Structure probing data (DMS and 2A3) for a 177-nucleotide construct.
For DMS, 3,226 sequencing reads were counted.
RNA sequence: GGGAACGACUCGAGUAGAGUCGAAAAGAUAUGGAGUCAUUAGGGAGUGCUGGUUCGGAAACGAACCUGCACAUCGAUCUAAGACUCCUAAGUCAAAAGGACUGAGGAGGUUCGCCUCCUCAGUCCACUCUGGUGAAUAGUUCGCUAUUCACCAGAGAAAAGAAACAACAACAACAAC
Reactivity to DMS in 0.01 (KOAc 150mM, MgCl2 10mM, bicine 150mM(pH8.5), 24C), signal-to-noise 2, nucleotides 027 to 126: g000a000u000a040u010g010g010a010g020u000c010a090u000u000a020g000g010g000a020g050u000g000c000u000g000g010u000u000c000g000g000a010a020a030c000g010a010a010c000c000u000g000c010a000c010a130u010c230g000a020u000c000u000a000a030g000a040c000u000c010c010u010a010a070g000u000c000a150a120a200a130g020g010a010c010u000g000a010g000g020a030g010g020u000u020c300g000c000c000u000c000c000u000c010a000g010u000c000c000a010
Reactivity to 2A3 in 0.01 (KOAc 150mM, MgCl2 10mM, bicine 150mM(pH8.5), 24C), signal-to-noise 2, nucleotides 027 to 126: g010a000u010a000u040g010g000a000g000u010c100a300u040u030a000g000g000g060a100g010u000g000c000u020g020g000u000u010c010g010g000a010a020a000c000g000a000a000c000c000u000g010c000a010c000a010u130c040g000a010u000c000u010a030a040g010a010c010u000c010c000u000a000a010g000u010c010a010a020a060a280g020g000a010c000u010g000a000g000g010a000g050g000u070u160c240g060c020c000u000c010c000u010c010a000g000u010c000c000a000
2A3 adducts were read by reverse transcription with SuperScript II with manganese. The data come from the RNA Mapping Database (RMDB), library TTRDES.